[RMDB]
RNA sequence: GGGAACGACUCGAGUAGAGUCGAAAACUUUGGUGAGUCCCUAUCUAGUAUAGCAAUCCACCAAGCAGGUGAGUUCACACAAUUCAGGUUCUCACAGAAAAUGCGCCCUGACUUGACAGGUAUGGUCAGGUGAGUCCAUAUUCGUAUGGACUCACCUAAAAGAAACAACAACAACAAC
Reactivity to 2A3 in 0.01 (KOAc 150mM, MgCl2 10mM, bicine 150mM(pH8.5), 24C), signal-to-noise 3, nucleotides 027 to 126: c000u020u020u110g050g000u020g000a100g030u020c020c000c000u000a010u000c030u040a040g140u060a000u000a030g000c040a050a020u030c010c000a000c000c000a030a000g070c000a020g030g050u020g000a010g030u060u020c030a030c000a040c030a280a070u260u170c070a120g000g010u050u010c010u010c020a020c020a040g230a030a110a000a010u080g030c070g050c020c000c000u010g050a040c010u060u140g000a050c000a060g040g170u200a120u120g070g020u030c000
Reactivity to DMS in 0.01 (KOAc 150mM, MgCl2 10mM, bicine 150mM(pH8.5), 24C), signal-to-noise 2, nucleotides 027 to 126: c050u050u020u010g030g000u000g000a070g010u050c290c300c000u020a110u000c050u010a100g010u010a000u000a010g000c110a100a160u000c050c000a010c020c040a010a080g040c130a070g000g060u000g000a070g020u000u000c010a020c040a140c290a020a130u000u020c230a110g010g000u000u010c000u020c020a050c010a060g000a040a010a100a130u030g040c030g010c270c020c000u000g000a050c030u000u100g020a100c070a070g000g000u000a050u010g020g000u000c110
About this RNA:
Conditions: 150 mM KOAc, 10 mM MgCl2 and 150 mM bicine (pH 8.5), 24 C. The record gives the reactivity of an RNA of 177 nucleotides to 2A3 and DMS. It was measured as part of the RMDB library OK1LIB.